[RMDB]
RNA sequence: GGGAACGACUCGAGUAGAGUCGAAAAUUCUAGCCCUCUCUGUGUGCAGAGCUAGUUAGUGCACACAAUAUAUACACAAUGUGUGUACAUAAUAUACACAAAUCUAUAUAUCUAUAUAUCUCUGUAUGUACAUGUAUUAAAGGGUGUGUGUUCAUACUGCUAUAUAGUAUUUCGAUACUAUAUAGCAAAAAGAAACAACAACAACAAC
Reactivity to DMS in 0.01 (KOAc 150mM, MgCl2 10mM, bicine 150mM(pH8.5), 24C), signal-to-noise 1, nucleotides 027 to 156: u020u000c010u000a110g000c000c010c000u000c050u020c090u000g020u010g080u000g030c080a010g030a080g050c040u010a120g020u010u010a130g020u020g000c030a000c000a020c010a100a150u010a090u020a080u000a060c080a050c110a200a090u010g020u010g010u000g010u000a000c010a100u010a100a230u000a050u000a010c010a060c010a100a100a220u000c030u030a300u010a120u000a100u030c030u030a160u000a110u000a070u010c010u020c050u000g030u000a010u000g020u000a020c010a030u000g010u000a020u000u030a070a070a070g000g040g040u000g040u000g030u000g030u000u010c050a110u000a090c190
Reactivity to 2A3 in 0.01 (KOAc 150mM, MgCl2 10mM, bicine 150mM(pH8.5), 24C), signal-to-noise 2, nucleotides 027 to 156: u060u000c010u030a000g030c000c030c000u010c000u010c000u040g020u000g000u020g010c000a020g020a020g060c010u030a040g020u090u060a040g020u030g000c010a000c000a000c000a010a010u030a000u000a000u040a000c040a000c040a200a160u030g010u000g010u000g030u030a000c010a010u250a170a050u030a030u060a020c000a000c000a030a200a030u040c010u010a050u060a100u050a040u190c020u050a120u060a070u060a210u300c000u050c040u140g030u020a020u040g070u010a020c000a000u090g130u130a020u020u140a150a120a010g050g000g000u020g000u020g040u040g070u090u040c020a030u300a110c020
Annotation
Source: RMDB library OK3TST, as collected in RNAgym. Chemical mapping of a 207-nucleotide RNA with DMS and 2A3. Values cover nucleotides 27 to 156. DMS adducts were read by reverse transcription with MarathonRT. For 2A3, 831 sequencing reads were counted. The reactions ran in a buffer of 150 mM KOAc, 10 mM MgCl2 and 150 mM bicine (pH 8.5), at 24 C.